Source: RMDB library OK2TST, as collected in RNAgym. An RNA of 177 nucleotides, treated with 2A3 and DMS and read out base by base. For 2A3, 983 sequencing reads were counted. The RNA was probed in 150 mM KOAc, 10 mM MgCl2 and 150 mM bicine (pH 8.5) at 24 C. DMS adducts were read by reverse transcription with MarathonRT.
RNA sequence: GGGAACGACUCGAGUAGAGUCGAAAAAGUGGGACUCAUGCAUCUAUUUAGCCUACAUCAGUGGGGCCCCAGUAACCGUAAUUGCAAAUUCAGUCGAAUAUUGUCUCCCAAGUUAUGGCCCAGAAAAGCAUCAAGUACAGUUCGCUGUACUUGAUGCAAAAGAAACAACAACAACAAC
Reactivity to 2A3 in 0.01 (KOAc 150mM, MgCl2 10mM, bicine 150mM(pH8.5), 24C), signal-to-noise 2, nucleotides 027 to 126: a000g080u090g000g000g010a080c000u000c060a020u090g040c030a110u050c040u170a140u180u170u100a060g010c000c020u050a020c050a120u100c060a010g090u080g010g030g000g120c040c000c000c000a010g040u080a030a010c020c060g000u030a060a090u130u090g050c020a060a060a050u070u070c030a030g160u120c050g110a040a030u100a150u070u100g000u000c010u000c050c030c000a010a020g000u040u000a050u120g110g020c010c000c000a060g140a030a110a030a000
Reactivity to DMS in 0.01 (KOAc 150mM, MgCl2 10mM, bicine 150mM(pH8.5), 24C), signal-to-noise 2, nucleotides 027 to 126: a060g040u010g010g000g000a120c010u000c020a110u010g040c100a060u000c110u000a110u000u010u010a170g010c010c060u010a080c080a070u010c110a090g010u010g000g000g000g000c000c010c020c030a120g000u000a090a110c040c050g010u020a040a060u000u000g010c060a030a070a050u010u030c010a100g020u010c100g010a030a020u010a080u000u010g020u000c160u000c040c010c030a140a100g030u000u020a040u000g010g020c030c020c000a110g010a070a040a090a030